[RMDB]
Background:
Conditions: 150 mM KOAc, 10 mM MgCl2 and 150 mM bicine (pH 8.5), 24 C. The record gives the reactivity of an RNA of 177 nucleotides to 2A3 and DMS.
RNA sequence: GGGAACGACUCGAGUAGAGUCGAAAAGGUCAUUCAGCCAAGGGCAAAGGGAAAACCAGUAGCUAUAAUUAACUUAGACUUUCAAGAAGACUAAACUAAAGUUUCAUACCCAAUGCUGCUCAGGGAACUCAUCAUCGAGUUUCGACUCGAUGAUGAGAAAAGAAACAACAACAACAAC
Reactivity to 2A3 in 0.01 (KOAc 150mM, MgCl2 10mM, bicine 150mM(pH8.5), 24C), signal-to-noise 1, nucleotides 027 to 126: g050g000u040c010a070u090u060c010a100g070c000c010a050a020g020g040g040c050a060a070a060g030g000g050a000a000a110a110c000c050a010g040u030a000g020c030u020a050u090a220a220u140u080a020a000c000u020u000a010g010a140c010u110u040u040c170a140a030g060a110a030g090a150c040u090a040a020a000c130u130a250a000a000g060u000u000u000c070a050u070a130c000c010c000a030a020u040g030c000u040g070c020u030c060a050g000g030g100a050a070
Reactivity to DMS in 0.01 (KOAc 150mM, MgCl2 10mM, bicine 150mM(pH8.5), 24C), signal-to-noise 1, nucleotides 027 to 126: g000g000u000c030a060u010u030c110a070g030c050c090a150a100g020g000g060c010a010a090a250g010g030g000a070a060a140a110c050c010a050g010u000a070g000c060u010a040u000a070a090u000u010a030a150c100u000u000a100g010a160c070u000u000u010c130a030a120g000a130a070g000a080c020u000a000a100a030c100u000a050a060a060g010u000u000u000c050a110u000a090c000c020c030a020a110u030g010c010u030g000c030u000c050a180g000g010g010a080a120
Notes:
For DMS the reverse transcriptase was MarathonRT. Source: RMDB library OK2TST, as collected in RNAgym.